RNA sequence: GGGAACGACUCGAGUAGAGUCGAAAAUAGCAGCUAUUGUUCAAGCUAUCUCUGUUAUCGGUAUGUUUACAGCAUUAAUUGGUAUGAUGUUAGCAGGCUCACGUUUACUUUAUUCAUUUGGACGUGAAGCGUCUAUGCUAUUCGUAGCAUAGACGCUAAAAGAAACAACAACAACAAC
Reactivity to 2A3 in 0.01 (KOAc 150mM, MgCl2 10mM, bicine 150mM(pH8.5), 24C), signal-to-noise 1, nucleotides 027 to 126: u050a000g010c060a020g060c020u110a050u220u110g030u050u080c060a090a040g010c020u010a030u000c040u000c000u000g080u090u040a040u050c020g060g030u100a060u130g050u010u100u030a070c040a020g000c000a020u080u080a110a040u210u220g010g020u040a040u090g050a030u080g000u040u000a000g010c030a010g040g000c010u010c000a010c010g000u000u010u040a060c040u040u100u090a130u160u110c100a070u000u090u070g030g020a020c010g020u000g050a000
Reactivity to DMS in 0.01 (KOAc 150mM, MgCl2 10mM, bicine 150mM(pH8.5), 24C), signal-to-noise 3, nucleotides 027 to 126: u030a050g000c050a060g000c070u000a070u010u000g010u010u000c140a110a120g020c020u000a030u000c040u000c020u000g020u000u010a020u010c070g000g030u010a040u000g010u000u010u010a080c210a120g010c050a040u000u010a040a110u010u010g010g010u000a020u010g000a040u000g010u000u000a060g010c030a060g000g010c110u000c010a020c020g000u000u000u000a060c100u000u000u000a110u040u010c120a050u030u000u000g000g000a020c050g010u000g000a060
Source: RMDB library OK2TST, as collected in RNAgym. This 177-nucleotide RNA was probed chemically with 2A3 and DMS. For 2A3, 1,345 sequencing reads were counted. The DMS profile rests on 2,529 reads. For 2A3 the reverse transcriptase was SuperScript II with manganese.